[RMDB]
An RNA of 207 nucleotides, treated with 2A3 and DMS and read out base by base. Values cover nucleotides 27 to 156. DMS (dimethyl sulfate) methylates the pairing face of unpaired adenines and cytosines. For DMS, 4,987 sequencing reads were counted. For DMS the reverse transcriptase was MarathonRT. The reactions ran in a buffer of 150 mM KOAc, 10 mM MgCl2 and 150 mM bicine (pH 8.5), at 24 C.

RNA sequence: GGGAACGACUCGAGUAGAGUCGAAAAGGUGGGUUCGCCCACCCCAUUGAUAUGGAGUCCCAGCUUUUGACGUCCUCGGGUGGCUCGGAAACGAGCCAUCUCUAGCGUGGGACGAUAAGCUGUGACUCCUAAGUCGGAUAACACCAUUCGUGGUGAACCUAUUCUAGUAGUUCGCUACUAGAAUAGGAAAAGAAACAACAACAACAAC
Reactivity to 2A3 in 0.01 (KOAc 150mM, MgCl2 10mM, bicine 150mM(pH8.5), 24C), signal-to-noise 7, nucleotides 027 to 156: g050g010u020g010g030g010u050u150c240g150c010c000c000a010c000c000c000c010a120u060u250g020a020u020a070u160g000g000a000g000u000c020c060c000a010g000c010u060u050u060u100g170a100c010g010u000c000c020u020c010g020g000g000u000g000g000c000u010c020g010g040a080a090a030c010g000a010g000c000c000a000u010c030u010c050u060a050g080c050g100u260g010g000g010a000c010g000a010u010a020a000g000c000u000g000u000g010a000c000u000c000c000u000a010a000g010u000c020g010g060a130u130a300a080c010a010c040c000a030u070u150c250g140u100g010g000u030g030a060a070
Reactivity to DMS in 0.01 (KOAc 150mM, MgCl2 10mM, bicine 150mM(pH8.5), 24C), signal-to-noise 2, nucleotides 027 to 156: g010g030u000g000g100g040u000u010c230g040c000c000c000a010c010c000c000c010a130u000u010g020a130u000a250u000g030g010a060g020u010c030c040c000a030g020c000u000u000u020u010g010a250c070g020u010c000c000u000c020g000g000g080u000g000g010c020u000c000g000g010a140a140a270c010g010a030g010c020c000a090u000c000u000c040u000a080g000c150g030u000g030g040g020a040c000g010a130u000a010a040g000c000u000g010u010g010a030c010u000c020c010u000a010a060g010u000c010g000g000a150u000a080a130c000a040c030c000a100u030u010c190g050u000g000g010u000g000a060a150